This 177-nucleotide RNA was probed chemically with 2A3 and DMS. Conditions: 150 mM KOAc, 10 mM MgCl2 and 150 mM bicine (pH 8.5), 24 C. For 2A3, 893 sequencing reads were counted. The data come from the RNA Mapping Database (RMDB), library OK2TST.

RNA sequence: GGGAACGACUCGAGUAGAGUCGAAAACUCAUUCGGUGCUAAACCCGAUGAAAAGAAGAAUGAUGAAGUCUCCAAGCCUGCCUUCUCAUUCGGAGCAAAGGCUAACGAAAAGAAAGAAAGUGAUGAAACACAAAUCCUAGUUCGCUAGGAUUUGUGUAAAAGAAACAACAACAACAAC
Reactivity to 2A3 in 0.01 (KOAc 150mM, MgCl2 10mM, bicine 150mM(pH8.5), 24C), signal-to-noise 1, nucleotides 027 to 126: c020u020c000a030u080u000c010g030g020u070g070c120u200a090a050a180c000c000c050g000a060u030g070a020a110a020a020g100a100a030g050a020a010u010g030a030u090g030a050a030g020u060c010u000c070c020a040a010g040c010c010u010g010c040c000u060u000c010u010c030a060u070u060c020g030g000a010g080c070a080a010a070g080g000c010u060a060a010c040g100a100a060a030a020g070a000a070a040g110a030a000a060g070u020g100a140u090g040a080a220
Reactivity to DMS in 0.01 (KOAc 150mM, MgCl2 10mM, bicine 150mM(pH8.5), 24C), signal-to-noise 3, nucleotides 027 to 126: c050u000c010a120u010u010c110g000g000u010g010c100u020a090a120a150c240c010c010g000a060u010g000a050a050a090a100g010a160a070g010a050a030u010g000a020u000g010a040a030g000u000c010u000c060c070a110a110g010c060c060u010g000c070c030u000u000c000u000c020a080u010u000c060g010g010a120g010c150a070a070a080g010g010c030u020a040a150c110g000a060a070a030a080g000a030a080a050g000a060a060a080g010u000g010a050u010g000a140a070